[RMDB]
RNA sequence: GGGAACGACUCGAGUAGAGUCGAAAACGGCAAAAAAGCAAACUUGACCACCAGGGAUAAAAGAGAUCUUAUCCAAGGAUGCAAAAGAUAAUCUCACUUUUGACACCCACUGAUCUCGAACUUAAAGAAAACCGAGACUACUUCGGUAGUCUCGGAAUCCACCAAUAAGCUUCGGCUUAUUGGUGGAAAAAGAAACAACAACAACAAC
Reactivity to 2A3 in 0.01 (KOAc 150mM, MgCl2 10mM, bicine 150mM(pH8.5), 24C), signal-to-noise 1, nucleotides 027 to 156: c030g050g000c040a020a000a020a050a070a050g050c030a080a090a050c120u070u060g030a080c020c060a040c030c030a070g000g060g030a040u040a140a050a050a000g010a000g010a000u030c020u090u150a030u030c050c010a080a080g060g000a040u070g010c020a000a000a000a000g030a110u120a230a300u240c100u030c140a060c020u070u000u000u000g080a070c000a000c010c020c000a040c050u050g010a020u000c010u000c010g010a040a080c030u090u140a160a030a000g110a010a160a030a000c000c000g030a040g000a000c040u000a000c020u080u050c100g010g030u000a000g000u000c000u000c010g000g000a000a000
Source: RMDB library M2RFPK, as collected in RNAgym. Chemical mapping of a 207-nucleotide RNA with 2A3. The RNA was probed in 150 mM KOAc, 10 mM MgCl2 and 150 mM bicine (pH 8.5) at 24 C.